[RMDB]
RNA sequence: GGGAACGACUCGAGUAGAGUCGAAAACAAGAGCCCGUAAAGAAGCAGUUUAGGGGCUGUAUUGAUGAUACUGGUCUUGCACAAAGUCUUGAGUUUGGUCUUGACCUGGAAGUCCCCUUUCUCAUGACUUCACAUGAGUUUUCGAACUCAUGUGAAGAAAAGAAACAACAACAACAAC
Reactivity to DMS in 0.01 (KOAc 150mM, MgCl2 10mM, bicine 150mM(pH8.5), 24C), signal-to-noise 3, nucleotides 027 to 126: c040a120a150g010a110g020c000c020c020g010u000a030a030a090g010a120a110g010c220a120g000u000u000u010a030g000g020g020g000c020u000g000u000a100u000u020g000a070u000g000a140u000a070c030u000g010g000u000c020u000u010g020c160a050c030a010a030a060g000u000c110u010u000g010a080g000u000u000u000g000g000u000c010u000u000g000a030c000c000u000g000g010a080a160g000u000c000c060c010c200u000u000u000c020u000c030a110u010g010a190
Reactivity to 2A3 in 0.01 (KOAc 150mM, MgCl2 10mM, bicine 150mM(pH8.5), 24C), signal-to-noise 2, nucleotides 027 to 126: c040a040a080g020a020g220c020c020c030g150u130a020a030a070g080a100a030g060c060a070g020u010u040u070a040g000g000g010g000c010u000g070u070a130u010u150g090a180u090g030a020u030a090c020u010g010g010u030c000u040u070g010c110a010c010a100a050a000g060u060c070u140u240g100a250g050u010u050u030g070g020u000c010u000u020g000a020c020c000u010g030g090a050a030g050u050c000c000c000c020u000u060u000c030u010c030a120u130g030a040

Structure probing data (DMS and 2A3) for a 177-nucleotide construct. For 2A3, 1,592 sequencing reads were counted. For DMS the reverse transcriptase was MarathonRT. The DMS profile rests on 2,537 reads. The data come from the RNA Mapping Database (RMDB), library OK2TST. The RNA was probed in 150 mM KOAc, 10 mM MgCl2 and 150 mM bicine (pH 8.5) at 24 C.